The record gives the reactivity of an RNA of 177 nucleotides to DMS and 2A3.

[RMDB]
RNA sequence: GGGAACGACUCGAGUAGAGUCGAAAAGAGCGAGCUCUCACAGUUGGUUAGGCUUACUGUGAUAAACGCCUCUAGAGCCUACCGUCUUGCUCGUGUCGAGCAUUCUCGUCCGCUACGUCAUCGGGAAGAGUACCUGGGGAUUCGUCCCCAGGUACUCAAAAGAAACAACAACAACAAC
Reactivity to DMS in 0.01 (KOAc 150mM, MgCl2 10mM, bicine 150mM(pH8.5), 24C), signal-to-noise 2, nucleotides 027 to 126: g000a090g000c060g030a070g000c150u010c130u000c030a050c060a020g000u000u010g010g010u000u030a100g020g010c030u000u000a070c030u000g010u010g030a030u000a050a100a080c130g030c050c040u000c020u000a130g010a050g020c020c040u000a090c040c050g000u000c070u000u000g010c010u000c000g030u000g000u000c040g000a080g020c100a110u000u000c000u000c010g020u000c060c040g020c060u000a030c120g020u000c060a100u000c040g000g010g000a050a060
Reactivity to 2A3 in 0.01 (KOAc 150mM, MgCl2 10mM, bicine 150mM(pH8.5), 24C), signal-to-noise 1, nucleotides 027 to 126: g050a000g030c010g000a000g000c000u020c000u030c070a010c020a040g050u080u030g100g010u100u190a040g100g110c010u040u000a030c020u040g010u000g010a010u160a000a100a020c020g040c020c000u040c030u020a080g020a040g040c020c040u010a020c040c010g000u020c000u020u060g010c010u000c020g040u050g020u000c050g000a030g000c020a080u000u010c040u000c000g010u020c000c030g070c080u080a070c080g110u050c020a050u050c030g020g040g030a120a090
The RNA was probed in 150 mM KOAc, 10 mM MgCl2 and 150 mM bicine (pH 8.5) at 24 C. The DMS profile rests on 1,321 reads.